[RMDB]
RNA sequence: GGGAACGACUCGAGUAGAGUCGAAAAGAAAGAGACAGUUCAUCUUCUUCACUCCACAAGGAAUCAAGGAACUCAACAUGGUCGAUGGUCUUCAAGUUUUCGAGAUGAACAGAGUCCGCGACUAGAAAUUUAGUAGUCCUUUCGAGGACUACUAAAUAAAAGAAACAACAACAACAAC
Reactivity to 2A3 in 0.01 (KOAc 150mM, MgCl2 10mM, bicine 150mM(pH8.5), 24C), signal-to-noise 3, nucleotides 027 to 126: g010a000a070a000g060a000g020a030c060a050g000u010u060c000a060u000c010u060u000c000u010u020c010a020c060u050c000c010a070c060a140a080g100g020a040a050u110c030a060a150g060g010a080a000c000u000c080a020a080c010a090u120g020g000u020c020g050a160u050g020g020u000c040u110u090c140a210a110g000u020u060u060u090c210g100a210g020a210u140g010a040a010c010a020g010a000g010u040c030c010g000c000g000a000c020u010a020g150a040a210
Reactivity to DMS in 0.01 (KOAc 150mM, MgCl2 10mM, bicine 150mM(pH8.5), 24C), signal-to-noise 4, nucleotides 027 to 126: g010a070a060a070g010a080g020a090c110a080g020u000u000c050a130u000c020u000u000c010u000u000c100a140c080u000c020c030a070c120a080a080g010g000a050a070u010c100a050a080g010g000a040a030c040u000c130a070a080c130a060u000g000g010u000c020g000a070u000g010g000u000c010u010u020c110a100a120g010u000u000u010u010c090g000a110g020a100u000g000a020a040c050a180g000a030g010u000c020c030g010c050g010a050c020u000a060g010a080a060

About this RNA
This 177-nucleotide RNA was probed chemically with 2A3 and DMS. 2A3 adducts were read by reverse transcription with SuperScript II with manganese. The RNA was probed in 150 mM KOAc, 10 mM MgCl2 and 150 mM bicine (pH 8.5) at 24 C. For 2A3, 2,410 sequencing reads were counted.